The record gives the reactivity of an RNA of 207 nucleotides to DMS and 2A3. For DMS, 2,364 sequencing reads were counted. Reactivities are given for positions 27 through 156. In probing experiments dimethyl sulfate is read out at A N1 and C N3, which are open when not base-paired. For 2A3, 4,374 sequencing reads were counted. Conditions: 150 mM KOAc, 10 mM MgCl2 and 150 mM bicine (pH 8.5), 24 C. For DMS the reverse transcriptase was MarathonRT.
[RMDB]
RNA sequence: GGGAACGACUCGAGUAGAGUCGAAAAGGCUAAUUCGUUAGCCACUUACGGGGUCUGUAGUACUGCCGACGAAGGACAUGUUCUGAAGCCUCCACGGAACAACAGCCAGAGGCAGGACUACAGACGGAGGCACCCAUUUUAGCCACUUCGGUGGCAAUGUAAAGAUUGCAUUCGUGCAAUCUUUACAAAAAGAAACAACAACAACAAC
Reactivity to DMS in 0.01 (KOAc 150mM, MgCl2 10mM, bicine 150mM(pH8.5), 24C), signal-to-noise 2, nucleotides 027 to 156: g000g000c000u010a010a020u020u010c200g060u010u000a060g010c000c030a060c110u010u000a110c070g020g020g050g000u000c010u000g060u000a020g030u000a010c010u010g050c000c020g000a170c160g020a080a150g030g020a070c160a300u020g010u010u030c000u000g000a030a180g030c040c000u000c020c010a300c050g030g000a000a000c000a060a170c150a110g000c070c030a090g000a220g040g050c000a060g000g000a030c010u000a020c020a000g030a010c010g020g020a030g060g020c030a140c020c010c030a300u000u000u000u000a210g010c010c000a030c000u000u010c280g060g020u000g010g000c000a000a000
Reactivity to 2A3 in 0.01 (KOAc 150mM, MgCl2 10mM, bicine 150mM(pH8.5), 24C), signal-to-noise 4, nucleotides 027 to 156: g010g010c000u010a030a000u060u100c200g100u090u000a000g000c010c000a040c040u160u170a070c090g020g010g010g000u000c000u010g000u000a010g000u000a000c000u010g000c010c000g180a300c190g070a070a010g000g020a010c040a140u120g000u000u000c000u020g050a110a020g000c000c000u000c000c010a010c020g000g000a010a000c020a030a040c050a060g170c010c000a030g020a060g100g000c000a000g010g010a000c000u000a000c000a000g000a000c000g000g000a000g000g000c000a030c020c000c000a080u140u110u070u190a010g000c000c000a010c020u050u050c270g120g000u010g000g000c010a000a020